[RMDB]
RNA sequence: GGGAACGACUCGAGUAGAGUCGAAAAGGAUUCGUGCCAGUGCUGGACCUAGCAGGCGCGUCUAUCGUAAACGGCCGGAUAGACGCGAGCGCCCUAUAGCGGCUAUAGGCUCGCGGGGUCCGGCCAACGAUUUUCUCACAUUCGUGUGAGGAAGUCGAAAAGAAACAACAACAACAAC
Reactivity to 2A3 in 0.01 (KOAc 150mM, MgCl2 10mM, bicine 150mM(pH8.5), 24C), signal-to-noise 3, nucleotides 027 to 126: g050g010a050u030u010c010g000u020g000c000c010a050g090u010g060c000u030g010g130a210c020c000u020a010g000c000a000g000g010c000g000c000g000u000c020u010a130u100c010g040u070a010a030a070c060g010g000c000c000g000g000a000u010a040g200a030c000g000c000g000a000g010c030g030c000c000c000u250a250u080a100g050c100g010g000c000u020a040u030a080g040g030c010u000c000g000c000g000g000g010g000u000c000c000g000g000c000c000a000a000
Reactivity to DMS in 0.01 (KOAc 150mM, MgCl2 10mM, bicine 150mM(pH8.5), 24C), signal-to-noise 7, nucleotides 027 to 126: g010g000a040u010u000c010g020u000g000c010c020a100g020u010g020c010u010g000g000a160c230c120u030a050g010c010a090g000g000c000g000c010g010u010c040u000a050u020c040g010u020a060a110a100c180g010g010c000c000g000g000a010u000a090g010a290c000g000c000g000a010g010c070g010c110c060c010u020a070u030a080g020c160g010g010c060u010a080u030a080g010g000c010u000c010g010c020g000g000g000g000u000c000c000g000g000c000c010a010a020
About this RNA:
This 177-nucleotide RNA was probed chemically with 2A3 and DMS. For DMS, 35,909 sequencing reads were counted. The 2A3 profile rests on 4,367 reads. 2A3 adducts were read by reverse transcription with SuperScript II with manganese.